[RMDB]
RNA sequence: GGGAACGACUCGAGUAGAGUCGAAAAAUUACAGUUAUAAACAAUGUGGACAAUGAAAUUGUUAAGUCUUCAGAUGUUGUAGACAGCAAUGAAAAUUUAACAUGGCCACUUGUUUUAGAAUGCACUACGAGCUCACGCUUCGGCGUGAGCAAAAGAAACAACAACAACAAC
Reactivity to 2A3 in 0.01 (KOAc 150mM, MgCl2 10mM, bicine 150mM(pH8.5), 24C), signal-to-noise 3, nucleotides 027 to 129: a000u160u080a070c030a000g000u030u040a060u110a110a010a010c000a000a030u270g010u000g050g060a000c040a050a040u070g060a210a090a120u000u000g000u000u030a000a000g000u000c010u000u010c030a050g090a300u050g050u090u000g010u010a030g050a110c000a030g010c000a020a000u010g030a000a010a000a010u160u010u030a020a020c030a070u040g000g000c000c000a000c000u000u000g000u000u000u000u000a040g020a110a030u100g050c030a000c110u150a010c120g060a010
Reactivity to DMS in 0.01 (KOAc 150mM, MgCl2 10mM, bicine 150mM(pH8.5), 24C), signal-to-noise 2, nucleotides 027 to 129: a000u040u040a120c150a200g040u000u090a120u030a060a000a000c000a050a000u050g000u000g000g000a000c060a150a210u030g030a100a060a090u040u010g020u000u030a060a020g000u010c050u000u000c050a030g000a190u030g020u000u000g050u050a160g010a230c040a070g000c050a040a100u020g040a080a010a000a000u070u100u070a010a010c010a050u040g000g000c020c000a040c000u000u020g020u000u000u000u000a030g050a000a000u010g040c160a070c090u060a070c100g010a190
The data come from the RNA Mapping Database (RMDB), library 15KLIB. Chemical mapping of a 170-nucleotide RNA with 2A3 and DMS. For 2A3, 4,111 sequencing reads were counted. For DMS, 5,096 sequencing reads were counted.